This 207-nucleotide RNA was probed chemically with 2A3. For 2A3 the reverse transcriptase was SuperScript II with manganese.
RNA sequence: GGGAACGACUCGAGUAGAGUCGAAAAAAUGUGUCAAAGGCACUGUCGAAACCAACAUUUGUAAGCCAGGAGAUUUUGGUAAUCGACCUCAUCAUUAUAGAUGUAAUGUUUUUUAUUUUUGUAUAAACGGUGACUCUGUACCAUUAAAUUGUAGCACCAUAUUGACCGUCUUCGGACGGUCAAUAUGAAAAGAAACAACAACAACAAC
Reactivity to 2A3 in 0.01 (KOAc 150mM, MgCl2 10mM, bicine 150mM(pH8.5), 24C), signal-to-noise 1, nucleotides 027 to 156: a000a020u090g100u010g030u030c050a040a060a090g030g000c030a000c030u010g000u010c030g000a050a000a030c000c020a020a000c010a030u020u060u100g060u070a040a040g020c030c050a020g020g090a070g000a040u050u110u110u060g100g020u110a030a060u000c020g080a190c000c030u070c020a060u000c000a010u020u200a050u190a200g010a000u030g020u030a100a120u000g050u050u020u040u020u020u080a190u030u140u070u140u070g090u020a080u090a080a040a000c010g000g000u000g000a020c000u000c010u090g010u060a030c010c010a020u120u000a030a020a120u130u060g040u070a050g070c050a000c080
The reactions ran in a buffer of 150 mM KOAc, 10 mM MgCl2 and 150 mM bicine (pH 8.5), at 24 C.